RNA sequence: GGGAACGACUCGAGUAGAGUCGAAAACGUAUUCGCUCUCCGCACGCUUGGUGAAGCCCGAAAGCCCGCCCGCCUGGCGCAAUGUGCGGAUGCGGUCGCGCCGCCCGGUCAGGAUCUUGUGCGGAUAAUUACGUAGCUCAUUCGUGAGCUACGUAAUAAAAGAAACAACAACAACAAC
Reactivity to 2A3 in 0.01 (KOAc 150mM, MgCl2 10mM, bicine 150mM(pH8.5), 24C), signal-to-noise 3, nucleotides 027 to 126: c030g020u040a180u060u150c040g000c030u010c010u010c040c000g000c010a010c040g050c030u050u060g000g020u070g030a070a030g050c000c030c030g060a070a000a010g030c020c010c020g000c000c010c000g010c000c010u060g070g000c040g020c100a080a170u270g050u080g040c010g000g020a020u050g020c020g040g100u110c050g010c020g000c010c010g000c000c010c030g020g010u050c020a010g040g060a080u020c000u170u210g010u050g010c000g050g000a020u090a070
Reactivity to DMS in 0.01 (KOAc 150mM, MgCl2 10mM, bicine 150mM(pH8.5), 24C), signal-to-noise 4, nucleotides 027 to 126: c110g020u010a140u010u000c040g020c090u010c120u000c000c030g000c020a030c030g010c150u000u010g020g040u010g000a170a110g000c050c040c030g020a080a090a170g010c040c030c040g010c060c030c110g000c010c030u000g010g020c010g020c110a090a070u010g010u010g020c000g000g000a040u010g040c010g010g010u000c130g020c100g010c020c020g000c030c040c040g020g000u010c040a050g010g000a070u010c090u010u010g030u010g020c020g000g010a040u000a050